Description: The record gives the reactivity of an RNA of 177 nucleotides to DMS and 2A3.
RNA sequence: GGGAACGACUCGAGUAGAGUCGAAAAGGCGCGCCCAUCGUCGUGCGCUUGAAGAACGCGAGGUCCUCGGGGAGUUUCCACGGAAGUCGGUUGUCGCGGCCGAUCACGCCGUUGCGGGCGCGCGCGAUAUCCGGUCAUGAUUCGUCAUGACCGGAUAAAAAGAAACAACAACAACAAC
Reactivity to DMS in 0.01 (KOAc 150mM, MgCl2 10mM, bicine 150mM(pH8.5), 24C), signal-to-noise 3, nucleotides 027 to 126: g000g000c000g020c010g000c010c020c030a120u020c120g030u000c140g000u000g010c060g000c050u010u030g000a100a130g010a060a110c080g000c030g010a080g010g010u000c060c000u000c000g010g000g010g000a220g010u000u000u000c010c000a110c110g000g000a090a090g020u000c020g010g010u000u000g030u000c060g030c030g010g000c000c000g000a060u000c060a090c300g010c020c020g010u010u000g010c180g010g010g020c020g010c050g020c010g000c040g010a130
Reactivity to 2A3 in 0.01 (KOAc 150mM, MgCl2 10mM, bicine 150mM(pH8.5), 24C), signal-to-noise 2, nucleotides 027 to 126: g070g000c000g000c000g010c030c000c020a150u080c050g110u040c030g010u010g000c030g000c030u020u080g090a120a030g060a140a040c060g010c020g070a020g060g110u030c010c010u020c010g000g010g000g010a030g050u000u060u000c010c010a000c010g000g020a080a030g040u050c000g040g000u050u120g110u140c040g000c010g060g000c040c010g020a030u090c030a000c040g020c000c020g040u040u190g090c110g020g000g000c030g000c000g000c000g000c010g000a000

Source: RMDB library OK2TRN, as collected in RNAgym. The reactions ran in a buffer of 150 mM KOAc, 10 mM MgCl2 and 150 mM bicine (pH 8.5), at 24 C.